[RMDB]
RNA sequence: GGGAACGACUCGAGUAGAGUCGAAAACGACCGCCUGACGGGUCGGACAUAGCGUCAGGAUCAUCCGUGUCAGUCACCACGGUAAUCAUGUGUCUGAUGAUGGUUUUCCAUCUUAAUCUGACUGCGUCGUAGCAGUCUACAGUACUAUGACAUUAGAACCCGAUUAGGUGUUCGCACCUAAUCGGGUAAAAGAAACAACAACAACAAC
Reactivity to 2A3 in 0.01 (KOAc 150mM, MgCl2 10mM, bicine 150mM(pH8.5), 24C), signal-to-noise 2, nucleotides 027 to 156: c000g000a000c000c000g030c000c000u020g020a000c020g000g010g000u010c040g040g110a050c040a100u140a060g120c000g000u000c010a000g000g000a000u090c040a030u010c020c000g000u000g080u060c020a040g010u000c000a000c000c000a000c020g020g050u060a070a050u070c030a040u040g000u000g050u020c000u000g020a030u050g000a030u000g030g020u080u080u230u130c020c000a010u000c000u000u060a120a140u080c090u100g020a000c010u010g000c010g060u130c030g080u110a030g040c000a020g000u000c000u030a030c000a050g060u000a020c020u010a050u110g080a020c010a050u130u110a080g080a110

Structure probing data (2A3) for a 207-nucleotide construct. The reactions ran in a buffer of 150 mM KOAc, 10 mM MgCl2 and 150 mM bicine (pH 8.5), at 24 C.